This 177-nucleotide RNA was probed chemically with 2A3 and DMS. The reactions ran in a buffer of 150 mM KOAc, 10 mM MgCl2 and 150 mM bicine (pH 8.5), at 24 C. For DMS the reverse transcriptase was MarathonRT.
RNA sequence: GGGAACGACUCGAGUAGAGUCGAAAAAGCGAAGAUCAACCUUGCCGAUGGAUUGAGGAUAGAAGCUUAUAAGUCACCACUGCCACCACCACAAUUCAAGCGAACCUCAUCAGGUGCCAUCAUCAGCGUAGCAUGCACUAUUCGUAGUGCAUGCUACAAAAGAAACAACAACAACAAC
Reactivity to 2A3 in 0.01 (KOAc 150mM, MgCl2 10mM, bicine 150mM(pH8.5), 24C), signal-to-noise 2, nucleotides 027 to 126: a020g090c090g050a030a000g020a070u050c020a040a040c010c030u030u060g030c050c060g140a130u100g040g050a050u000u100g010a010g050g050a010u060a170g140a100a010g000c010u040u120a130u040a150a030g040u030c020a040c070c030a040c040u070g010c000c000a000c010c010a010c000c010a030c080a100a010u060u080c030a070a030g030c020g040a060a030c010c010u020c000a110u060c030a050g040g020u000g040c040c000a050u040c000a000u030c010a010g090c010
Reactivity to DMS in 0.01 (KOAc 150mM, MgCl2 10mM, bicine 150mM(pH8.5), 24C), signal-to-noise 3, nucleotides 027 to 126: a050g000c050g040a110a130g000a070u000c070a070a080c020c020u010u020g010c060c050g000a100u020g020g020a100u000u000g000a070g010g010a080u000a070g020a130a140g000c030u010u010a100u010a070a100g010u000c030a050c010c030a070c050u000g000c050c010a040c060c020a060c030c020a040c050a070a050u000u010c110a060a080g030c050g000a030a090c050c040u000c050a050u000c010a060g010g010u000g020c020c060a040u020c100a080u020c050a100g010c180